[RMDB]
RNA sequence: GGGAACGACUCGAGUAGAGUCGAAAAUUUACAAAGCAAUCUCAGGAGUUAUUUCAUGAGAUUGCCGCGCAGCCAUACAGCUGCUCGCAAUGACGGGUUUACUAUUGAAUACUCACGGUAUGGCGUAAUAAAAUGCUGGUUUCGACCAGCAUUUUAUAAAAGAAACAACAACAACAAC
Reactivity to DMS in 0.01 (KOAc 150mM, MgCl2 10mM, bicine 150mM(pH8.5), 24C), signal-to-noise 2, nucleotides 027 to 126: u010u000u010a180c040a090a250a100g000c000a000a000u000c000u000c000a020g000g000a010g030u000u030a050u020u020u000c000a140u000g000a000g000a020u000u010g010c010c040g000c300g010c100a060g020c010c020a040u000a040c090a080g020c140u000g010c020u000c020g030c070a100a070u000g000a090c030g000g020g010u000u000u000a030c100u000a120u030u010g000a100a100u000a060c120u010c070a080c130g010g010u000a010u000g000g000c000g030u000a070
The data come from the RNA Mapping Database (RMDB), library OK2TRN. The record gives the reactivity of an RNA of 177 nucleotides to DMS. The reactions ran in a buffer of 150 mM KOAc, 10 mM MgCl2 and 150 mM bicine (pH 8.5), at 24 C. For DMS, 1,253 sequencing reads were counted.